[RMDB]
RNA sequence: GGGAACGACUCGAGUAGAGUCGAAAAUGAAUCGAGAUAGAGGUAGAAAUAGCAAGGGGUUCUAUCGUAAACGGCCGGAUAGAACCCUGUGCACGUGGUCCGCCCACGGCUGUCGGGUUUAGGCCAACGAUUUUCACAGUUUCGACUGUGGAAGUCGAAAAGAAACAACAACAACAAC
Reactivity to DMS in 0.01 (KOAc 150mM, MgCl2 10mM, bicine 150mM(pH8.5), 24C), signal-to-noise 2, nucleotides 027 to 126: u020g010a050a020u020c040g000a050g000a050u010a030g010a040g050g000u010a150g000a290a300a300u080a300g000c130a300a300g000g000g000g000u000u000c000u000a000u000c000g030u030a040a090a110c130g000g000c020c000g000g000a020u000a000g000a000a000c000c000c010u000g000u000g010c000a080c020g000u010g010g000u030c070c140g000c050c000c000a040c050g000g010c020u010g000u000c030g000g000g000u000u000u020a060g000g000c040c030a030a190
Reactivity to 2A3 in 0.01 (KOAc 150mM, MgCl2 10mM, bicine 150mM(pH8.5), 24C), signal-to-noise 3, nucleotides 027 to 126: u150g020a000a020u070c040g020a000g030a090u050a040g060a010g030g050u100a030g120a070a160a050u230a060g000c070a140a220g000g000g000g000u000u000c000u000a000u000c000g030u090a100a090a110c050g020g000c010c010g040g000a000u000a000g000a000a000c000c000c000u000g010u010g020c050a030c070g000u010g000g000u030c050c160g010c030c000c000a020c000g020g010c030u030g060u050c020g010g010g000u030u070u120a070g010g000c000c000a000a010